[RMDB]
RNA sequence: GGGAACGACUCGAGUAGAGUCGAAAAAUGCCGCAUUCAGCGACGGUCACUCUAGUGGGCUACUGUCAAUCUAGCGUUGACAUCUACAUACUAUAUAGUAAUACCAAUACUCAAGACUACGAAACGGACGCAUGGUGACUUUCGAGUCACCAUGCGUAAAAGAAACAACAACAACAAC
Reactivity to 2A3 in 0.01 (KOAc 150mM, MgCl2 10mM, bicine 150mM(pH8.5), 24C), signal-to-noise 1, nucleotides 027 to 126: a000u160g040c020c000g050c000a000u070u030c000a080g000c000g060a000c020g010g020u010c000a070c000u030c020u020a020g000u000g000g050g000c000u040a080c130u050g030u000c040a000a000u000c080u110a060g050c050g000u000u040g000a040c000a030u000c000u000a060c000a100u130a020c000u020a090u080a040u010a300g050u010a100a000u050a120c000c000a150a120u120a000c030u020c090a000a080g080a070c090u110a010c050g140a040a000a020c010g000g060